[RMDB]
RNA sequence: GGGAACGACUCGAGUAGAGUCGAAAAGAUAUGGACCUGUGGACAGCAUCGAUCUACACUCGGAAACGAGUGUAGGGAGCUGCCCACUGGGUCCUAAGUCAAACAUGCAGCGUUCGCGCUGCAUGAAGUAAACCUUAGACUUCGGUCUAAGGUUUACAAAAGAAACAACAACAACAAC
Reactivity to 2A3 in 0.01 (KOAc 150mM, MgCl2 10mM, bicine 150mM(pH8.5), 24C), signal-to-noise 1, nucleotides 027 to 126: g000a020u000a000u050g010g010a010c030c040u040g020u040g010g030a030c020a010g000c010a060u300c080g000a010u030c010u000a000c010a010c010u010c000g030g000a020a010a020c000g010a020g020u020g000u000a000g020g000g000a010g000c000u020g000c010c010c000a020c030u000g000g000g010u030c010c000u000a010a010g020u000c000a090a080a150c010a000u010g050c000a000g000c020g080u140u200c300g030c010g030c180u010g000c000a010u010g000a000a010
Reactivity to DMS in 0.01 (KOAc 150mM, MgCl2 10mM, bicine 150mM(pH8.5), 24C), signal-to-noise 2, nucleotides 027 to 126: g000a020u000a080u010g000g000a020c010c010u010g020u000g000g020a010c000a000g030c000a300u000c260g010a010u030c000u000a000c000a010c010u000c010g020g000a030a020a060c000g000a030g010u000g020u000a000g010g000g000a020g040c000u000g000c000c000c000a010c000u000g010g000g000u000c000c000u000a000a090g000u010c020a200a150a270c020a000u000g030c000a000g000c000g040u010u000c300g020c000g020c000u000g020c000a000u000g000a050a110